[RMDB]
RNA sequence: GGGAACGACUCGAGUAGAGUCGAAAAAGCAGCAGUUCCGAAUCCGACGUCCUGGACGCGGCGCGGUUCGACGAACUGGCCGCCCGGCUCAGCGAGCAGUUCGGGGUGACGGUGUAUCUGGCCGAGAACCGUAAAUGCGGUUCGCCGCAUUUACGGUAAAAGAAACAACAACAACAAC
Reactivity to 2A3 in 0.01 (KOAc 150mM, MgCl2 10mM, bicine 150mM(pH8.5), 24C), signal-to-noise 2, nucleotides 027 to 126: a000g000c060a000g000c010a010g030u040u010c010c010g020a020a050u050c040c000g030a120c020g150u020c000c060u100g150g010a090c060g050c080g060g030c120g040c010g100g000u050u060c070g100a130c070g030a010a000c010u030g030g030c000c010g020c000c000c000g010g000c010u000c030a130g070c060g100a020g040c060a020g010u120u110c000g030g010g020g000u020g010a020c000g010g020u050g020u020a080u050c030u070g000g050c020c030g090a090g010a080
Reactivity to DMS in 0.01 (KOAc 150mM, MgCl2 10mM, bicine 150mM(pH8.5), 24C), signal-to-noise 2, nucleotides 027 to 126: a100g000c060a080g020c050a040g000u000u000c020c000g010a080a080u010c010c010g020a150c010g000u000c030c020u000g020g010a110c150g040c050g020g000c030g000c070g020g010u010u000c010g020a200c140g000a040a030c020u010g010g040c010c010g080c030c070c050g010g020c020u000c020a150g030c080g000a060g040c070a100g010u000u010c000g010g000g000g010u000g000a090c030g010g000u000g000u000a060u000c070u000g020g000c000c050g030a130g010a100

An RNA of 177 nucleotides, treated with 2A3 and DMS and read out base by base. The data come from the RNA Mapping Database (RMDB), library OK2TST. Reactivities are given for positions 27 through 126. For 2A3, 1,703 sequencing reads were counted. The DMS profile rests on 2,705 reads.